[RMDB]
RNA sequence: GGGAACGACUCGAGUAGAGUCGAAAAGAUAUGGACUUCUACCCACCCUCUGCAUCCAACAGCUCGGAAACGAGACAUGGAUUCCCAGAGGAGGAAGUCCUAAGUCAAAGUGACGUUCGCGUCACAAUCUAUUAGUGUUCUUCGGAACACUAAUAGAAAAAGAAACAACAACAACAAC
Reactivity to DMS in 0.01 (KOAc 150mM, MgCl2 10mM, bicine 150mM(pH8.5), 24C), signal-to-noise 9, nucleotides 027 to 126: g010a110u010a160u000g010g020a010c000u000u010c000u000a140c010c010c020a300c130c010c000u000c010u010g060c150a030u000c000c010a030a080c280a130g000c010u000c000g010g000a100a070a170c000g010a010g010a030c070a180u000g000g000a020u000u000c260c300c020a010g010a020g000g000a080g010g000a020a010g000u000c000c000u010a030a050g010u010c110a070a090a100g000u000g010a010c010g010u000u010c210g020c010g010u000c000a000c000a090a110
Reactivity to 2A3 in 0.01 (KOAc 150mM, MgCl2 10mM, bicine 150mM(pH8.5), 24C), signal-to-noise 6, nucleotides 027 to 126: g060a070u220a210u250g000g000a000c000u000u030c010u100a300c000c000c020a010c000c010c000u000c010u020g000c010a010u000c010c000a050a070c060a280g030c000u020c010g020g050a070a090a080c010g010a000g030a030c020a110u080g000g010a000u070u070c020c040c000a010g010a000g000g010a000g000g000a000a000g010u000c000c000u030a090a020g120u080c150a230a020a090g000u000g010a010c010g010u040u090c300g040c010g080u020c000a000c010a010a070